[RMDB]
RNA sequence: GGGAACGACUCGAGUAGAGUCGAAAAGAAGAAGCUGCCACAGGCGCUCAUCAUCGGGGUCAAGAAAGGAGGGACCCGCGCGCUGCUGGAGGCGAUCCGCGUGCACCCGGACGUGCGGGCGGUGGGCAUGACCACACUUUUUCGAAAGUGUGGUCAUAAAAGAAACAACAACAACAAC
Reactivity to DMS in 0.01 (KOAc 150mM, MgCl2 10mM, bicine 150mM(pH8.5), 24C), signal-to-noise 2, nucleotides 027 to 126: g020a140a150g000a110a110g010c040u000g020c020c020a130c090a200g010g010c030g040c020u000c130a070u010c100a070u010c160g030g020g010g010u010c030a090a070g010a070a080a120g000g000a110g010g000g020a140c000c000c010g030c120g000c010g010c040u010g000c200u010g000g000a100g010g000c010g020a060u000c050c030g040c020g000u000g010c020a050c010c020c070g010g030a070c120g030u000g000c040g010g010g010c050g000g030u010g000g010g030c170

The record gives the reactivity of an RNA of 177 nucleotides to DMS.
DMS (dimethyl sulfate) methylates the pairing face of unpaired adenines and cytosines.
The reactions ran in a buffer of 150 mM KOAc, 10 mM MgCl2 and 150 mM bicine (pH 8.5), at 24 C.